[RMDB]
RNA sequence: GGGAACGACUCGAGUAGAGUCGAAAACUCCGACGACAUCGAAGUCGCGCUGUUCGAUCGUGUGAAGAGCAACUCGCGCUCGCUGAAGCGCCCGUCGAUCGACGACGAGACCGCCGAGAGCAUCGUGGCAUGACUCUCUGUUCGCAGAGAGUCAUGCAAAAGAAACAACAACAACAAC
Reactivity to DMS in 0.01 (KOAc 150mM, MgCl2 10mM, bicine 150mM(pH8.5), 24C), signal-to-noise 2, nucleotides 027 to 126: c050u000c020c000g010a050c020g040a070c130a120u000c070g010a300a090g000u010c010g000c070g010c020u000g000u000u000c030g000a010u000c050g010u010g020u000g010a060a110g000a060g020c080a080a190c090u000c060g010c020g040c000u000c080g010c150u000g010a070a050g010c050g030c040c030c030g010u000c030g010a050u010c080g000a080c020g000a030c030g000a040g000a040c030c060g010c080c010g010a090g020a070g040c090a080u000c050g040u000g000
Reactivity to 2A3 in 0.01 (KOAc 150mM, MgCl2 10mM, bicine 150mM(pH8.5), 24C), signal-to-noise 2, nucleotides 027 to 126: c010u000c000c020g030a030c010g060a000c010a060u050c020g050a050a000g020u020c000g000c020g010c040u040g040u180u040c020g020a050u000c030g010u050g020u060g150a100a200g050a060g130c070a090a110c060u030c090g070c000g000c030u030c020g240c230u170g070a180a000g000c020g020c010c020c000g120u100c020g000a060u020c030g020a070c000g000a000c010g000a000g010a020c000c030g140c070c010g040a050g020a010g050c010a030u030c030g040u030g100